Chemical mapping of a 207-nucleotide RNA with 2A3. The RNA was probed in 150 mM KOAc, 10 mM MgCl2 and 150 mM bicine (pH 8.5) at 24 C. It was measured as part of the RMDB library RNAMAK. For 2A3, 891 sequencing reads were counted. For 2A3 the reverse transcriptase was SuperScript II with manganese.
RNA sequence: GGGAACGACUCGAGUAGAGUCGAAAAGCGUACUACACAAGACGAAUCUUUGAUCGCUCGAACUACUGGGUUCCCAAAUAGGAACCCAGCGAGCGGGAGAUUCGUGUUGUGUAUCGCAAAACGGAGCUCCUUCUCGUUCGCGAGAAGGAGCUCCGAAGAUAGGACAUAUGUUCGCAUAUGUCCUAUCAAAAGAAACAACAACAACAAC
Reactivity to 2A3 in 0.01 (KOAc 150mM, MgCl2 10mM, bicine 150mM(pH8.5), 24C), signal-to-noise 1, nucleotides 027 to 156: g000c010g020u070a110c030u000a000c070a000c000a000a010g100a070c000g010a000a000u000c010u090u190u050g190a240u230c020g020c010u030c000g000a090a040c110u160a020c010u300g000g000g030u020u010c060c040c010a160a090a000u160a020g000g010a000a000c030c000c000a000g000c010g000a000g010c000g000g000g000a020g000a000u040u000c000g000u020g100u000u000g000u000g010u000a000u080c000g010c000a000a000a000a090c000g020g000a000g050c010u010c000c000u000u000c020u000c010g130u100u100c230g000c020g150a030g000a000a010g000g000a030g000c000u000c000c000g000a000a000